This 177-nucleotide RNA was probed chemically with DMS and 2A3. The data come from the RNA Mapping Database (RMDB), library TTRDEL. For DMS the reverse transcriptase was MarathonRT. Reactivities are given for positions 27 through 126.
[RMDB]
RNA sequence: GGGAACGACUCGAGUAGAGUCGAAAAGAUAUGGACGUGCAUUUCUUUUGACGAUCAGGUCGGAAACGAUAUUGGAUCGAUAAGAAAUGCGUCCUAAGUCAAACCUCCUUCCUUCGGGAAGGAGGAACUAACCAUUGCAGUUCGCUGCAAUGGUUAGAAAAGAAACAACAACAACAAC
Reactivity to DMS in 0.01 (KOAc 150mM, MgCl2 10mM, bicine 150mM(pH8.5), 24C), signal-to-noise 4, nucleotides 027 to 126: g000a020u010a300u010g010g020a020c010g010u000g030c010a000u000u000u010c000u000u000u020u010g010a240c100g010a020u000c000a050g000g010u010c000g000g010a070a100a180c010g000a010u000a030u010u000g010g020a000u000c000g010a160u010a010a030g000a000a020a000u000g000c000g010u000c000c000u000a040a110g000u000c020a130a100a150c010c000u010c000c000u000u000c000c000u000u000c180g030g010g010a010a000g000g000a000g000g000a000a030
Reactivity to 2A3 in 0.01 (KOAc 150mM, MgCl2 10mM, bicine 150mM(pH8.5), 24C), signal-to-noise 6, nucleotides 027 to 126: g030a030u050a050u120g010g000a020c080g100u220g070c090a020u020u030u010c020u030u240u140u260g290a160c020g000a000u000c010a010g010g030u000c000g020g040a060a060a040c000g000a000u040a300u220u300g270g010a010u010c020g090a110u060a130a010g000a000a000a000u010g000c010g000u010c000c000u010a080a010g040u010c030a090a060a200c000c000u000c010c000u000u000c020c010u060u070c300g110g000g010a000a000g000g000a000g000g000a000a000